[RMDB]
RNA sequence: GGGAACGACUCGAGUAGAGUCGAAAAGCAAAUAUUGUCUUAAUUACUUAGGCUAAAAGAAAUAAGUAUUAAAGCGGGACAAGGCAUCGACAUUUGAUACAAAUGUUGAUCAAUGGAUGUCUUAUUUAAACCUCAUCCGGCUUCGGCCGGAUGAGAACUAUAUCCCUCUGUUCGCAGAGGGAUAUAGAAAAGAAACAACAACAACAAC
Reactivity to 2A3 in 0.01 (KOAc 150mM, MgCl2 10mM, bicine 150mM(pH8.5), 24C), signal-to-noise 2, nucleotides 027 to 156: g020c030a100a070a050u200a120u210u080g030u050c010u040u170a150a110u080u040a070c030u020u070a020g070g000c020u200a240a140a050a000g040a020a110a040u070a010a030g000u010a050u070u100a150a080a040g060c070g050g050g030a010c040a070a010g000g030c020a010u020c000g100a100c060a060u060u040u150g110a110u100a080c050a040a190a080u220g030u110u150g030a020u030c020a000a060u040g030g000a010u010g010u010c000u020u000a040u010u120u040a080a040a010c020c000u000c010a000u000c000c000g020g020c010u060u170c280g100g000c020c010g000g000a000u000g000a000g010a010a000
Reactivity to DMS in 0.01 (KOAc 150mM, MgCl2 10mM, bicine 150mM(pH8.5), 24C), signal-to-noise 1, nucleotides 027 to 156: g000c030a070a100a180u010a050u020u010g010u000c010u000u020a040a140u000u000a010c000u000u000a050g040g010c070u000a080a080a090a170g000a130a100a080u000a030a040g000u000a070u000u020a070a100a120g020c070g020g020g000a020c050a000a070g020g020c020a010u000c000g000a040c000a020u010u010u020g010a180u010a120c100a040a050a050u000g020u000u000g010a110u000c030a040a120u000g010g010a040u000g010u010c020u000u000a090u040u000u000a050a070a150c130c000u000c000a020u000c000c000g060g010c000u010u000c300g010g040c000c010g070g000a000u000g010a010g060a010a040